The data come from the RNA Mapping Database (RMDB), library OK2TRN. An RNA of 177 nucleotides, treated with DMS and 2A3 and read out base by base. For DMS the reverse transcriptase was MarathonRT. The 2A3 profile rests on 2,641 reads. For 2A3 the reverse transcriptase was SuperScript II with manganese. For DMS, 3,762 sequencing reads were counted. Conditions: 150 mM KOAc, 10 mM MgCl2 and 150 mM bicine (pH 8.5), 24 C.
RNA sequence: GGGAACGACUCGAGUAGAGUCGAAAAUUUCUUAAGGAAACGGUUGCAGAAAGGGCAAAUAUAUUUUGAUUCUGGGGAUUACAACAUGGCUAAAGCAAUAAUGAAGAACAAGCAACUUCCUACUGCACCACCUAUAUAUCUUCGGAUAUAUAGGUGGAAAAGAAACAACAACAACAAC
Reactivity to DMS in 0.01 (KOAc 150mM, MgCl2 10mM, bicine 150mM(pH8.5), 24C), signal-to-noise 4, nucleotides 027 to 126: u020u010u020c020u010u000a120a120g030g000a050a090a080c100g000g000u000u000g010c020a060g000a090a070a070g000g010g000c070a040a030a060u010a110u010a080u010u000u000u000g010a150u000u000c040u000g010g010g000g010a110u010u000a060c110a060a080c070a040u000g010g020c020u000a060a090a100g020c040a030a060u010a070a080u010g000a080a060g010a060a040c130a060a080g010c050a070a040c090u000u000c010c020u000a100c140u000g010c130a170
Reactivity to 2A3 in 0.01 (KOAc 150mM, MgCl2 10mM, bicine 150mM(pH8.5), 24C), signal-to-noise 2, nucleotides 027 to 126: u040u040u050c030u060u090a090a060g030g010a000a070a010c050g030g020u080u050g000c030a010g060a100a060a050g040g000g000c030a010a090a000u150a010u020a080u080u100u070u080g070a090u100u020c030u040g080g000g020g020a010u100u110a030c050a110a020c030a090u060g050g000c010u060a140a020a010g010c010a020a100u120a130a060u110g030a030a100g030a030a030c060a050a000g010c000a000a030c000u000u020c030c010u050a110c030u030g020c000a010